[RMDB]
RNA sequence: GGGAACGACUCGAGUAGAGUCGAAAAUACGGCACACUUCAGGGGGAACUUCCCUCAGUUCAUUACCGUGGAAGGUUGCUUGAAGGAGUCAGAAUCAAGUGAGAACACUGGUGAAGGAACAUGGGUAACCAUCCUACUCCUUCGGGAGUAGGAUGGUAAAAGAAACAACAACAACAAC
Reactivity to 2A3 in 0.01 (KOAc 150mM, MgCl2 10mM, bicine 150mM(pH8.5), 24C), signal-to-noise 2, nucleotides 027 to 126: u120a000c000g030g000c030a020c010a000c100u070u100c110a070g060g000g000g000g000a050a110c040u100u050c030c000c000u100c030a010g000u000u000c020a010u050u020a030c010c000g080u040g000g040a150a040g040g170u100u060g000c000u000u020g030a050a030g200g020a090g170u210c170a080g180a060a040u030c020a040a000g000u040g090a080g010a070a020c020a000c080u090g020g000u040g020a070a050g060g000a000a040c010a180u080g000g000g080u060a030
Reactivity to DMS in 0.01 (KOAc 150mM, MgCl2 10mM, bicine 150mM(pH8.5), 24C), signal-to-noise 2, nucleotides 027 to 126: u030a150c120g020g060c080a040c120a070c000u000u010c110a100g000g000g000g040g000a030a110c190u010u000c000c000c040u000c070a070g010u020u000c200a110u010u000a040c000c020g010u010g000g000a100a060g000g000u010u000g020c000u000u000g010a050a050g000g000a150g000u000c090a130g020a090a090u010c050a060a000g020u000g020a200g020a030a130c040a050c020u090g030g000u010g000a120a030g020g000a020a020c050a080u000g000g000g000u030a100